[RMDB]
RNA sequence: GGGAACGACUCGAGUAGAGUCGAAAAGCGUACUACCGACUAUACAUUUGUCAGCUCUAUUAGGCUAAUCCCAAAUAGGAUUAGCCGAAGUAGAGCUUGGAUUUAAUGUACGAAUCGGUAUCGCAAACAGUCCAUAGGGUUCGCCCUAUGGACUGAACCGUGACAGUUGAUUCGUCAACUGUCACGGAAAAGAAACAACAACAACAAC
Reactivity to 2A3 in 0.01 (KOAc 150mM, MgCl2 10mM, bicine 150mM(pH8.5), 24C), signal-to-noise 2, nucleotides 027 to 156: g010c000g040u090a090c020u000a000c000c000g030a000c080u000a020u000a040c000a000u000u000u000g000u010c000a020g000c000u000c000u030a300u300u030a100g000g030c000u000a000a000u090c020c060c080a170a190a160u300a150g010g000a000u030u040a040g000c000c010g000a030a000g000u000a000g000a000g050c000u000u040g000g000a000u060u270u210a020a030u000g000u000a000c070g120a230a300u010c000g000g000u000a040u110c000g010c040a000a120a000c000a000g000u000c000c000a040u000a000g040g000g020u040u060c160g130c000c000c000u000a000u000g000g000a000c000u000g000a000a010